Source: RMDB library TTRDES, as collected in RNAgym. This 177-nucleotide RNA was probed chemically with 2A3 and DMS. DMS adducts were read by reverse transcription with MarathonRT. Reactivities are rounded to 0.1 and cut off at 0 and 3. Values cover nucleotides 27 to 126. The 2A3 profile rests on 6,171 reads.
RNA sequence: GGGAACGACUCGAGUAGAGUCGAAAAAAAAAGAUAUGGACCAUAUGGUUUGCCAUUGUCAGAGCGUGUACUCGGAAACGAGUACCGCUCUUGGAUUUAUGGUGAUCUUAUGGUCCUAAGUCAAAAACAUAAUUCCUUAGUUCGCUAAGGAAUUAUGAAAAGAAACAACAACAACAAC
Reactivity to 2A3 in 0.01 (KOAc 150mM, MgCl2 10mM, bicine 150mM(pH8.5), 24C), signal-to-noise 2, nucleotides 027 to 126: a000a030a020a040a000g080a040u110a050u090g000g000a000c010c000a020u020a020u080g060g140u040u090u300g020c010c000a010u000u030g020u020c020a010g000a000g020c020g010u300g000u110a000c000u000c010g030g000a060a110a060c010g020a020g020u000a010c010c000g010c000u000c000u010u030g000g000a000u210u300u180a020u010g000g020u020g010a020u000c000u010u000a010u000g010g000u000c000c000u010a010a000g010u000c020a030a000a110a040a050
Reactivity to DMS in 0.01 (KOAc 150mM, MgCl2 10mM, bicine 150mM(pH8.5), 24C), signal-to-noise 4, nucleotides 027 to 126: a040a060a070a080a040g010a040u000a300u010g010g000a020c000c000a020u010a010u000g010g000u000u000u010g070c010c000a010u000u000g000u000c010a020g000a010g010c000g010u020g020u000a000c000u000c000g000g010a110a090a170c000g010a020g000u000a000c000c000g000c000u000c000u000u000g020g010a010u000u010u000a010u000g010g010u010g000a000u000c000u000u010a000u000g010g010u000c000c000u000a000a070g010u020c040a090a100a060a120a180